RNA sequence: GGGAACGACUCGAGUAGAGUCGAAAAAUGGACUUCGGUCCAUAUCAAUCCUAAGUCUGUAGACUAUCCCACCGAGCUAUAAUCUAUAUCGGAAACGAUAUAGGUAGCUCGUGUGGGACGAAUCUACAGAUAUGGAACCACCGGCCUUCGGGCCGAAAAAUGGAACGAAAUUCGUUUCGUUCCAUUUAAAAGAAACAACAACAACAAC
Reactivity to DMS in 0.01 (KOAc 150mM, MgCl2 10mM, bicine 150mM(pH8.5), 24C), signal-to-noise 2, nucleotides 027 to 156: a070u000g000g020a030c030u000u000c300g080g020u000c010c010a010u000a040u010c120a130a140u000c010c000u000a100a230g010u000c000u010g020u000a000g030a020c050u000a150u010c000c000c000a030c000c020g000a020g000c030u000a040u000a300a150u000c000u000a010u000a010u000c000g000g000a220a100a290c020g000a010u010a010u000a010g040g030u010a020g030c000u000c000g010u000g040u000g000g000g010a000c010g000a060a040u000c000u000a010c000a020g020a010u000a100u000g000g020a140a120c040c000a050c230c010g030g010c020c010u000u010c300g060g010g040c000c000g000a000a020
Reactivity to 2A3 in 0.01 (KOAc 150mM, MgCl2 10mM, bicine 150mM(pH8.5), 24C), signal-to-noise 4, nucleotides 027 to 156: a000u010g000g000a010c020u050u050c300g150g000u000c000c000a000u000a010u030c040a040a130u020c000c000u040a150a020g020u000c000u010g000u010a010g010a020c050u040a060u030c000c000c000a000c000c000g000a000g010c020u050a020u050a300a170u140c000u000a000u000a010u000c000g080g000a130a050a070c010g000a000u000a000u000a010g000g000u010a010g000c000u000c010g020u100g000u000g010g000g000a000c000g000a010a180u000c000u000a000c000a000g000a000u000a020u020g000g010a020a020c010c020a030c060c010g010g000c000c010u050u160c240g070g000g000c000c010g010a020a000